[RMDB]
RNA sequence: GGGAACGACUCGAGUAGAGUCGAAAACGCAUCAGCCACCAUCCACUCAUCUUAAUCCUGCGGUACAGAGAGACGCGCGGUCAAGUGCGGUAGGGGCGUCUUCUCGCAUGUAACUCAAAGUAACAAACCCGCCCUUGUAUUUCGAUAUAAGGGCGGGAAAAGAAACAACAACAACAAC
Reactivity to DMS in 0.01 (KOAc 150mM, MgCl2 10mM, bicine 150mM(pH8.5), 24C), signal-to-noise 6, nucleotides 027 to 126: c110g000c070a040u000c070a100g020c020c030a060c030c020a050u000c050c040a070c100u000c080a060u020c040u010u000a110a130u010c030c020u000g020c080g000g010u000a060c080a130g000a090g010a070g010a040c040g010c020g020c030g010g010u000c120a090a110g020u000g010c030g020g020u010a080g000g000g010g000c030g010u000c020u000u000c010u000c030g020c100a070u000g000u000a060a070c040u000c070a080a070a110g010u010a050a070c120a060a080a160
Reactivity to 2A3 in 0.01 (KOAc 150mM, MgCl2 10mM, bicine 150mM(pH8.5), 24C), signal-to-noise 5, nucleotides 027 to 126: c030g030c010a060u040c040a050g040c010c000a050c020c000a040u020c000c000a040c030u050c010a100u050c020u070u130a080a050u080c010c010u040g040c030g020g000u040a040c040a030g080a000g010a010g000a060c020g030c000g000c020g030g070u080c070a120a090g050u050g110c040g010g030u060a040g030g030g030g030c010g000u000c000u130u030c010u020c010g020c040a040u130g020u080a050a040c000u020c080a100a080a040g060u140a070a090c020a100a030a120
Source: RMDB library OK2TST, as collected in RNAgym.
Chemical mapping of a 177-nucleotide RNA with DMS and 2A3.
For DMS, 7,857 sequencing reads were counted.
For 2A3 the reverse transcriptase was SuperScript II with manganese.
DMS adducts were read by reverse transcription with MarathonRT.